[RMDB]
RNA sequence: GGGAACGACUCGAGUAGAGUCGAAAAUCGGGACCUAAGGCGAGGCCGACAGGCGUAGUCGAUGGACAACCGGUUGAUAUUCCGGUACCCGCUUUGAAACGCCCAAUACUGAAUCAGGCGAUGCUAAGAAGUGUCGUAUAUUCGUAUACGACACUUCAAAAGAAACAACAACAACAAC
Reactivity to DMS in 0.01 (KOAc 150mM, MgCl2 10mM, bicine 150mM(pH8.5), 24C), signal-to-noise 9, nucleotides 027 to 126: u000c000g000g010g020a300c020c010u010a130a200g000g010c010g000a200g000g010c010c000g020a110c300a080g010g020c010g000u000a300g000u000c010g000a190u010g000g010a160c180a130a060c000c000g010g000u000u000g010a170u010a170u000u000c000c010g000g000u000a140c020c010c000g010c140u000u010u000g010a080a100a130c180g000c010c010c040a090a090u020a110c140u010g010a120a070u010c100a070g000g010c050g000a080u000g020c050u010a120a160
Reactivity to 2A3 in 0.01 (KOAc 150mM, MgCl2 10mM, bicine 150mM(pH8.5), 24C), signal-to-noise 4, nucleotides 027 to 126: u030c010g010g010g080a070c010c010u050a090a000g000g010c010g020a050g020g070c030c040g110a180c150a150g000g000c010g020u010a000g000u020c000g000a010u040g000g010a030c050a050a050c010c010g000g030u000u060g040a060u030a130u200u060c000c000g000g000u010a070c000c020c000g010c040u080u050u040g120a150a120a020c070g020c010c000c000a020a060u230a120c140u110g110a100a070u120c030a050g090g000c040g090a060u110g020c040u140a190a010
Chemical mapping of a 177-nucleotide RNA with DMS and 2A3. The 2A3 profile rests on 5,469 reads.